RNA sequence: GGGAACGACUCGAGUAGAGUCGAAAAGUUGCCGACGAACCUUCCAUCCUUCCAAACGUCGUUUUCGACAACCUUCCAACCUUCCAAUCUACUCGAGAGGAGGAGGAGGAGGAGGAGGAGGAAUUAACACAUUGGCUUUAUUCGUAAAGCCAAUGUGAAAAGAAACAACAACAACAAC
Reactivity to DMS in 0.01 (KOAc 150mM, MgCl2 10mM, bicine 150mM(pH8.5), 24C), signal-to-noise 2, nucleotides 027 to 126: g010u010u000g050c050c020g030a090c070g010a050a090c090c030u010u000c030c030a160u010c030c000u000u020c030c080a070a090a100c200g000u000c040g020u000u000u000u000c010g000a040c030a090a220c030c000u010u000c020c020a060a110c030c010u000u010c000c030a110a210u000c020u000a020c050u000c080g000a030g020a300g010g000a110g000g000a170g000g010a110g000g000a110g000g040a070g040g000a130g020g000a070g000g000a300a050u010u000a070a150
Reactivity to 2A3 in 0.01 (KOAc 150mM, MgCl2 10mM, bicine 150mM(pH8.5), 24C), signal-to-noise 2, nucleotides 027 to 126: g060u050u090g150c040c030g010a030c030g000a020a100c010c010u040u000c050c020a220u020c000c010u060u060c010c060a040a100a120c080g030u030c000g000u040u040u090u200c020g020a000c010a070a040c000c000u090u020c030c020a050a020c040c010u090u080c020c000a000a050u060c020u080a080c010u060c070g000a020g000a020g040g050a040g050g020a030g000g050a020g020g010a050g000g060a040g020g050a050g000g040a020g000g050a010a060u120u120a080a010
Structure probing data (DMS and 2A3) for a 177-nucleotide construct. For 2A3, 1,869 sequencing reads were counted. The reactions ran in a buffer of 150 mM KOAc, 10 mM MgCl2 and 150 mM bicine (pH 8.5), at 24 C. The DMS profile rests on 1,317 reads. The data come from the RNA Mapping Database (RMDB), library M2PK90.